[RMDB]
RNA sequence: GGGAACGACUCGAGUAGAGUCGAAAAGAUAUGGAGCCUUUGAGGCAACAGCCCACGGUUCGGAAACGAACCUGGGACAUGCCUCUGAGGCUCCUAAGUCAAAGUAACCGACUUCGGUCGGUUACAACUCAAUAGUUGUCUUCGGACAACUAUUGAGAAAAGAAACAACAACAACAAC
Reactivity to DMS in 0.01 (KOAc 150mM, MgCl2 10mM, bicine 150mM(pH8.5), 24C), signal-to-noise 2, nucleotides 027 to 126: g000a020u000a060u000g010g000a020g010c000c000u000u000u000g030a020g040g050c000a100a050c170a090g000c000c000c010a010c300g010g000u010u010c000g010g000a000a020a030c000g010a010a010c000c000u010g000g000g000a000c040a250u010g010c000c010u010c010u020g010a000g020g020c010u000c000c010u000a020a040g000u010c000a210a110a230g030u000a010a010c000c000g000a030c000u010u010c210g030g010u000c000g000g010u000u000a000c000a070a200
Reactivity to 2A3 in 0.01 (KOAc 150mM, MgCl2 10mM, bicine 150mM(pH8.5), 24C), signal-to-noise 2, nucleotides 027 to 126: g000a000u010a010u070g000g000a010g000c000c000u000u010u030g020a010g050g000c230a300a030c100a150g030c020c000c000a040c150g000g020u000u020c000g000g000a030a020a000c000g000a000a010c000c000u000g000g040g000a020c030a220u300g000c010c000u000c000u000g000a010g020g000c000u000c000c000u010a000a000g010u010c000a000a020a010g000u000a020a000c010c000g030a010c020u070u140c300g120g000u000c000g000g000u010u010a000c010a000a000

Conditions: 150 mM KOAc, 10 mM MgCl2 and 150 mM bicine (pH 8.5), 24 C. This 177-nucleotide RNA was probed chemically with DMS and 2A3. Values cover nucleotides 27 to 126. The data come from the RNA Mapping Database (RMDB), library TTRDES. 2A3 is a SHAPE reagent: it acylates the 2'-hydroxyl of flexible nucleotides of all four kinds. For 2A3 the reverse transcriptase was SuperScript II with manganese.